The record gives the reactivity of an RNA of 207 nucleotides to 2A3.
The RNA was probed in 150 mM KOAc, 10 mM MgCl2 and 150 mM bicine (pH 8.5) at 24 C.
The data come from the RNA Mapping Database (RMDB), library M2RFPK.
The 2A3 profile rests on 631 reads.
RNA sequence: GGGAACGACUCGAGUAGAGUCGAAAAACACCAAAACUGAAAACGGAAGGCCAUCCUUCCACGACGAUACUUACUUUCCUUUGAUCGUCGUUACUACUGGCAUAGCCACAAAGGAGAACAAACAUGAGCGCGGACACUGACUUCGGUCAGUGUCCAAGCCGUCAUCUGCCUUCGGGCAGAUGACGGCAAAAGAAACAACAACAACAAC
Reactivity to 2A3 in 0.01 (KOAc 150mM, MgCl2 10mM, bicine 150mM(pH8.5), 24C), signal-to-noise 2, nucleotides 027 to 156: a000c070a140c040c040a090a100a060a050c160u190g070a130a000a030a000c000g010g000a000a020g060g000c210c000a180u230c050c080u000u000c000c000a020c000g000a000c000g000a000u110a180c060u080u020a020c020u110u150u050c040c000u030u020u080g050a030u000c000g000u040c000g000u020u060a010c010u020a030c040u010g020g020c060a300u120a080g050c000c020a030c010a000a040a000g100g050a010g070a190a020c060a070a040a080c060a080u190g070a000g020c090g020c050g000g000a020c000a000c000u000g000a000c000u000u060c180g050g000u000c000a000g050u000g000u000c000c000a000a000